Annotation: The record gives the reactivity of an RNA of 177 nucleotides to DMS and 2A3. As a SHAPE reagent, 2A3 marks flexible, mostly unpaired nucleotides at the ribose 2'-OH.
[RMDB]
RNA sequence: GGGAACGACUCGAGUAGAGUCGAAAAGUGCUUGAGCACUGUCGUUGCGACGAGAGUUCGAUGCGAUGAUGUCGAUCCGGAAAGACAUCCCGGAAAGCAUUUGCUCUCUUUGUGCUCUUGCACGAAAGGGACUGCGGAGGUUCGCCUUCGUAGUCCCAAAAGAAACAACAACAACAAC
Reactivity to DMS in 0.01 (KOAc 150mM, MgCl2 10mM, bicine 150mM(pH8.5), 24C), signal-to-noise 6, nucleotides 027 to 126: g010u000g010c000u000u010g000a010g010c000a000c010u030g010u000c040g000u030u040g000c040g020a030c040g000a020g000a030g010u000u020c240g010a010u010g010c010g000a160u030g000a010u000g000u010c010g000a130u020c050c050g000g010a100a100a200g000a030c040a050u010c010c170c100g010g000a100a120a190g010c010a000u000u000u040g010c000u000c000u000c000u020u020u020g020u000g000c000u000c030u000u000g010c010a000c000g000a030a090a110
Reactivity to 2A3 in 0.01 (KOAc 150mM, MgCl2 10mM, bicine 150mM(pH8.5), 24C), signal-to-noise 9, nucleotides 027 to 126: g000u000g000c000u010u010g000a000g000c000a010c020u040g030u010c060g170u180u300g180c120g010a010c010g000a000g000a000g020u060u220c140g020a000u020g010c030g040a070u100g010a020u050g060u080c030g010a040u050c040c050g040g080a110a060a010g080a030c020a040u040c000c010c020g050g050a080a050a010g000c000a000u010u020u120g000c000u000c000u000c000u070u060u090g000u000g000c000u000c000u000u000g000c010a000c010g000a020a000a000
The reactions ran in a buffer of 150 mM KOAc, 10 mM MgCl2 and 150 mM bicine (pH 8.5), at 24 C. For 2A3 the reverse transcriptase was SuperScript II with manganese. For 2A3, 39,433 sequencing reads were counted. Source: RMDB library OK1LIB, as collected in RNAgym.